[RMDB]
RNA sequence: GGGAACGACUCGAGUAGAGUCGAAAAAACCCCCUAUGUUACCUCUUGAAGAAGACACAGCAUGAAGGGUGUUUAUUUUCAUUCAGGUCAUACAGCUUGUUUGGGGUGCGGAAUUUUCUAUCCCAAAGACGAAUCUUAAUUUCGAUUAAGAUUCGUCAAAAGAAACAACAACAACAAC
Reactivity to DMS in 0.01 (KOAc 150mM, MgCl2 10mM, bicine 150mM(pH8.5), 24C), signal-to-noise 4, nucleotides 027 to 126: a080a040c030c010c000c040c070u000a030u010g010u010u010a050c040c060u000c070u010u000g010a050a030g010a030a040g000a020c010a030c050a070g020c100a130u020g010a180a120g010g000g000u000g000u000u000u000a090u010u000u000u000c010a020u000u010c140a030g030g000u000c200a050u010a050c110a080g000c100u000u000g010u000u010u000g010g010g010g020u010g010c180g030g020a060a100u000u000u010u010c060u010a170u010c000c000c000a040a090a130
Reactivity to 2A3 in 0.01 (KOAc 150mM, MgCl2 10mM, bicine 150mM(pH8.5), 24C), signal-to-noise 2, nucleotides 027 to 126: a000a010c020c000c010c000c020u080a030u090g030u040u070a000c000c000u000c000u000u010g000a000a000g010a010a000g000a010c010a010c000a010g210c030a120u170g170a080a030g160g060g010u010g000u020u020u030a300u010u020u030u000c020a020u060u010c030a000g000g000u020c010a020u080a090c000a020g100c030u210u210g060u180u210u080g010g000g000g000u020g050c070g000g160a060a040u050u070u190u070c030u060a110u010c000c030c000a010a010a010

The record gives the reactivity of an RNA of 177 nucleotides to DMS and 2A3. The reactions ran in a buffer of 150 mM KOAc, 10 mM MgCl2 and 150 mM bicine (pH 8.5), at 24 C. DMS adducts were read by reverse transcription with MarathonRT. Values cover nucleotides 27 to 126. The 2A3 profile rests on 1,300 reads. The data come from the RNA Mapping Database (RMDB), library OK2TRN.